[RMDB]
RNA sequence: GGGAACGACUCGAGUAGAGUCGAAAAUGACAGUGAUUGGCGCGAUCCUGACGUCGCUGGUAAUCGCCCGCGAAUGGGAACGCGGCACAAUGGAGGCGUUACUGUCGACUCAAGUCACGCGCAGUGACCUAUCUGCAUACUUCGGUAUGCAGAUAGGAAAAGAAACAACAACAACAAC
Reactivity to DMS in 0.01 (KOAc 150mM, MgCl2 10mM, bicine 150mM(pH8.5), 24C), signal-to-noise 7, nucleotides 027 to 126: u010g000a040c010a020g020u000g010a080u010u010g010g000c010g010c020g010a090u010c010c010u000g000a140c260g020u000c010g020c000u010g000g010u000a120a120u010c270g000c020c000c030g000c030g010a050a070u000g000g000g000a080a070c020g020c000g010g010c040a070c150a070a080u000g010g010a110g010g000c060g010u000u000a020c010u000g000u000c010g010a140c050u000c050a060a050g000u000c020a030c050g000c140g000c080a180g010u000g000a080
Reactivity to 2A3 in 0.01 (KOAc 150mM, MgCl2 10mM, bicine 150mM(pH8.5), 24C), signal-to-noise 7, nucleotides 027 to 126: u180g020a010c020a010g050u030g080a090u110u140g060g050c000g000c000g050a080u020c000c020u040g050a050c160g050u010c010g000c020u010g010g010u110a270a250u180c150g040c010c000c020g000c020g060a060a090u200g030g010g020a030a030c020g020c000g030g040c060a040c040a150a090u130g070g030a050g010g070c070g040u060u060a010c000u000g010u020c010g020a040c010u010c070a050a040g050u030c010a000c030g090c030g030c140a030g010u010g060a020